[RMDB]
RNA sequence: GGGAACGACUCGAGUAGAGUCGAAAAAAAGAUAUGGACCUGAGGGAGCCUAGCAUACCGAAGAACAUAAUCGGAAACGAUUAUGGGAGGUAUGAUCUAGGCGAAGAACUCAGGUCCUAAGUCAAAACUCUGAUAACAAGUUCGCUUGUUAUCAGAGAAAAGAAACAACAACAACAAC
Reactivity to DMS in 0.01 (KOAc 150mM, MgCl2 10mM, bicine 150mM(pH8.5), 24C), signal-to-noise 3, nucleotides 027 to 126: a080a080a070g020a040u010a300u000g000g010a000c000c000u000g020a020g000g000g010a090g020c000c020u000a020g000c010a000u010a000c010c000g030a170a140g010a180a100c010a020u000a000a020u010c000g010g000a150a090a210c010g010a000u010u000a010u000g000g000g000a060g010g000u000a000u000g000a070u020c010u010a020g010g010c010g040a030a080g000a080a160c000u000c000a010g000g000u000c000c000u000a010a090g000u000c030a110a060a100a170
Reactivity to 2A3 in 0.01 (KOAc 150mM, MgCl2 10mM, bicine 150mM(pH8.5), 24C), signal-to-noise 1, nucleotides 027 to 126: a000a000a010g090a040u110a060u130g000g000a000c010c010u000g000a010g000g000g010a040g000c000c000u020a000g030c000a000u010a000c000c010g260a300a040g010a090a010c000a010u010a010a010u010c010g010g030a060a050a040c000g000a010u000u010a000u020g000g000g020a010g000g000u000a010u000g010a010u040c000u000a010g020g000c020g000a000a020g000a020a000c010u000c020a010g030g000u000c000c010u000a000a020g000u030c000a000a000a020a010

This 177-nucleotide RNA was probed chemically with DMS and 2A3. It was measured as part of the RMDB library TTRDES. DMS adducts were read by reverse transcription with MarathonRT. For DMS, 4,486 sequencing reads were counted.